[RMDB]
RNA sequence: GGGAACGACUCGAGUAGAGUCGAAAAGGAUCUGAGUACUUAUAAGUGCGAAGUGAGUGAGGGUCUUACGAGCACAAAUUACACCCCUCUAUUAAGUAUCGAAGAUCGGCCGGAGAUCGAGAUACAACUAUUAUCCGGCGACUGUACGAAGAUCCGAAUACCUGGUAUAGUUCGCUAUACCAGGUAUAAAAGAAACAACAACAACAAC
Reactivity to 2A3 in 0.01 (KOAc 150mM, MgCl2 10mM, bicine 150mM(pH8.5), 24C), signal-to-noise 5, nucleotides 027 to 156: g000g000a000u010c010u020g010a010g020u020a010c010u110u140a120u080a300a040g000u010g010c000g010a070a010g010u010g010a000g000u090g010a010g000g000g040u200c000u010u000a010c020g000a000g020c010a010c030a050a150a090u150u150a050c050a150c040c010c020c000u000c010u000a180u120u130a220a040g000u010a000u010c010g020a070a000g000a040u000c040g040g000c000c000g000g000a010g000a000u010c010g010a010g000a090u010a000c000a030a010c010u040a010u290u030a040u050c000c000g000g000c010g020a060c090u110g000u000a000c000g000a010a010g000a010u000c000c000g000a000
Reactivity to DMS in 0.01 (KOAc 150mM, MgCl2 10mM, bicine 150mM(pH8.5), 24C), signal-to-noise 4, nucleotides 027 to 156: g030g050a030u000c020u000g010a300g040u010a020c000u000u000a090u000a070a180g020u010g000c010g010a170a180g040u000g010a070g020u000g000a080g000g000g020u000c020u010u000a050c090g010a300g000c020a080c090a060a070a130u010u010a130c050a130c060c000c020c010u000c040u000a130u000u000a030a180g010u000a010u000c030g020a150a210g000a020u010c000g040g020c040c050g040g010a120g000a040u000c030g000a300g030a070u010a080c060a050a110c070u000a040u000u000a160u000c000c010g030g020c010g030a120c160u010g020u000a020c010g020a280a040g000a070u000c000c000g020a180
The record gives the reactivity of an RNA of 207 nucleotides to 2A3 and DMS.
The RNA was probed in 150 mM KOAc, 10 mM MgCl2 and 150 mM bicine (pH 8.5) at 24 C.
For DMS, 5,648 sequencing reads were counted.
For 2A3 the reverse transcriptase was SuperScript II with manganese.
For DMS the reverse transcriptase was MarathonRT.